[RMDB]
RNA sequence: GGGAACGACUCGAGUAGAGUCGAAAAGAUAUGGAUGGGAUAUGAGCGAUAAGAUGCCAUCGGAAACGAUGGGCAUCUUUUGACGCUCGACCAUCCUAAGUCAAACCCAUAAGUUCGCUUAUGGGAACAACACAUUAGGGUUCGCCCUAAUGUGUUGAAAAGAAACAACAACAACAAC
Reactivity to DMS in 0.01 (KOAc 150mM, MgCl2 10mM, bicine 150mM(pH8.5), 24C), signal-to-noise 7, nucleotides 027 to 126: g010a010u000a240u010g000g000a010u000g010g000g010a220u010a090u010g010a020g020c010g020a130u010a010a010g010a000u000g000c000c000a020u000c010g020g000a060a030a090c000g010a010u000g020g010g010c000a000u000c000u000u000u010u000g010a220c070g020c000u000c010g000a050c010c000a000u000c000c010u000a000a060g000u010c030a120a150a230c010c000c000a010u000a010a010g010u000u010c280g020c000u000u000a010u000g000g000g010a080a110
Reactivity to 2A3 in 0.01 (KOAc 150mM, MgCl2 10mM, bicine 150mM(pH8.5), 24C), signal-to-noise 3, nucleotides 027 to 126: g030a000u040a020u100g020g000a010u010g020g050g030a050u140a200u300g020a110g020c030g050a070u040a300a010g000a000u000g030c000c000a000u010c000g010g010a060a050a010c010g000a000u010g020g060g000c010a000u000c000u020u000u000u020g020a020c030g000c000u000c000g000a000c000c000a000u000c000c000u000a040a010g010u000c020a060a040a170c010c000c000a000u020a000a000g120u050u270c300g020c230u020u010a000u020g000g000g040a010a050